This 177-nucleotide RNA was probed chemically with 2A3 and DMS. It was measured as part of the RMDB libraries RFM100 and RFMREP. The reactions ran in a buffer of 150 mM KOAc, 10 mM MgCl2 and 150 mM bicine (pH 8.5), at 24 C. For 2A3 the reverse transcriptase was SuperScript II with manganese.
[RMDB]
RNA sequence: GGGAACGACUCGAGUAGAGUCGAAAAAAAUGAGCGAUAGAGUGCUUCGGUAGUAAAAAUAUCUUUCAGGAAGUAAACACAUCAGGAGCGAUAGCGGUGAAUUAUUCGUGGUUUUGUCGAUUCGGCAUCUUUUAAUGAGUUUCGACUCAUUAAAAGAAAAAGAAACAACAACAACAAC
Reactivity to 2A3 in 0.01 (KOAc 150mM, MgCl2 10mM, bicine 150mM(pH8.5), 24C), signal-to-noise 7, nucleotides 027 to 126: a000a000a010u150g010a020g020c030g020a030u060a090g120a000g060u100g000c010u030u030c020g060g010u040a030g040u080a050a040a050a090a060u140a080u050c040u010u120u050c030a050g080g070a040a010g020u090a040a140a030c050a000c010a090u090c030a030g070g030a040g040c040g040a050u070a030g030c040g040g010u040g050a060a080u160u080a070u040u120c050g010u050g040g010u020u030u040u060g030u020c040g040a110u070u020c010g020g000c020a020
Reactivity to DMS in 0.01 (KOAc 150mM, MgCl2 10mM, bicine 150mM(pH8.5), 24C), signal-to-noise 6, nucleotides 027 to 126: a050a050a040u020g000a050g000c030g000a060u010a050g010a100g020u010g010c030u000u000c060g010g010u000a060g010u010a010a060a050a090a120u020a030u010c020u010u000u010c080a080g010g000a040a080g000u000a070a050a060c110a060c060a080u000c060a040g010g010a070g010c050g020a060u010a060g000c060g000g010u010g000a060a050u020u000a100u010u000c070g010u010g010g000u010u000u000u000g010u010c030g000a130u000u000c030g000g000c260a100